[RMDB]
RNA sequence: GGGAACGACUCGAGUAGAGUCGAAAAGAUGAGAGUUCAACUGUAGCAGAAUAGUUAGGUUAGUACAGCAACUAACCAUUGUAUAGCUGUAUACAACGUGAAGAUCUACUACUUCACAACUCUCAGAGAUAGGUUUCAUCUUCGGAUGAGAUCUAUCAAAAGAAACAACAACAACAAC
Reactivity to 2A3 in 0.01 (KOAc 150mM, MgCl2 10mM, bicine 150mM(pH8.5), 24C), signal-to-noise 9, nucleotides 027 to 126: g170a070u070g000a000g000a000g000u040u110c080a110a060c120u030g010u020a010g000c010a000g020a080a080u060a050g190u190u100a050g030g000u000u010a000g010u040a070c130a180g040c070a080a010c000u000a000a000c000c010a010u050u090g050u020a060u050a050g020c000u000g010u020a300u010a120c020a050a020c060g000u010g010a000a000g010a020u080c050u170a120c030u050a060c000u060u000c000a000c000a010a010c000u000c000u000c010a000g000a000
Reactivity to DMS in 0.01 (KOAc 150mM, MgCl2 10mM, bicine 150mM(pH8.5), 24C), signal-to-noise 9, nucleotides 027 to 126: g010a140u000g000a010g000a010g000u000u010c240a130a120c180u010g010u000a010g000c020a020g000a060a040u010a050g010u020u020a090g010g000u000u000a020g010u010a080c200a170g020c250a060a030c000u000a010a020c030c030a130u010u020g010u010a050u010a080g000c010u000g000u000a070u010a010c020a010a060c110g000u000g000a010a010g000a100u030c150u030a110c200u020a060c000u000u000c010a010c050a060a010c000u000c000u000c000a030g000a140
This 177-nucleotide RNA was probed chemically with 2A3 and DMS.
Reactivities are given for positions 27 through 126.
For 2A3 the reverse transcriptase was SuperScript II with manganese.